RNA sequence: GGGAACGACUCGAGUAGAGUCGAAAAUUCAAUCCCGGUGGAUCCCGCGCGGCCUCUAUCCUGUGAACUCGCCCAGGGCUGGAAGGCAGCAAGCGUCAACGGGCUCUGUCGGGUGCGCGGGAGUAAAACUCUGUACACAUUUCGAUGUGUACAGAGUAAAAGAAACAACAACAACAAC
Reactivity to DMS in 0.01 (KOAc 150mM, MgCl2 10mM, bicine 150mM(pH8.5), 24C), signal-to-noise 3, nucleotides 027 to 126: u010u010c140a120a180u000c000c010c010g020g020u010g010g010a120u010c000c000c000g040c040g000c000g000g020c020c000u000c080u010a050u020c000c000u000g000u010g000a130a120c160u010c010g000c010c030c010a300g000g000g000c020u000g010g030a090a070g000g010c000a000g000c040a110a210g010c040g010u000c080a120a060c040g010g000g020c030u010c030u000g000u010c140g000g010g000u000g020c030g010c010g000g010g000a030g000u000a040a080a150
Reactivity to 2A3 in 0.01 (KOAc 150mM, MgCl2 10mM, bicine 150mM(pH8.5), 24C), signal-to-noise 1, nucleotides 027 to 126: u090u030c030a020a040u040c000c000c050g010g110u100g090g040a050u000c000c000c000g010c000g010c000g090g140c020c000u000c020u040a150u250c000c000u050g010u030g040a080a040c020u010c100g000c000c010c020a050g000g010g000c030u050g020g120a100a100g050g020c000a010g000c030a020a020g010c000g000u020c050a070a040c010g010g000g000c030u000c010u030g030u000c060g010g060g030u000g000c000g020c000g010g050g010a010g000u050a000a020a010
The record gives the reactivity of an RNA of 177 nucleotides to DMS and 2A3. For 2A3 the reverse transcriptase was SuperScript II with manganese. The 2A3 profile rests on 1,534 reads.